[RMDB]
RNA sequence: GGGAACGACUCGAGUAGAGUCGAAAAUCUGUAACGUUCGCGUUACAGAAAAGGGUAUGAGAGUACCAGAACAGAUCAUCCCAGAUCAGGAAACAGAUCAAAAAAGGGCCACGUUCGCGUGGCCCAAUCAUUCAACCUUCUUCGGAAGGUUGAAUGAAAAAGAAACAACAACAACAAC
Reactivity to DMS in 0.01 (KOAc 150mM, MgCl2 10mM, bicine 150mM(pH8.5), 24C), signal-to-noise 1, nucleotides 027 to 126: u000c010u000g000u000a000a000c010g010u000u000c260g050c030g030u000u000a000c000a020g010a030a040a110a170g000g000g030u000a000u000g000a140g000a150g010u010a000c030c010a110g000a120a050c150a160g000a030u000c020a050u000c000c020c090a060g000a070u000c000a090g000g000a100a090a080c230a080g000a030u020c100a000a070a040a130a100a150g000g000g000c000c020a000c010g010u000u020c150g030c010g050u000g000g000c020c000c010a010a010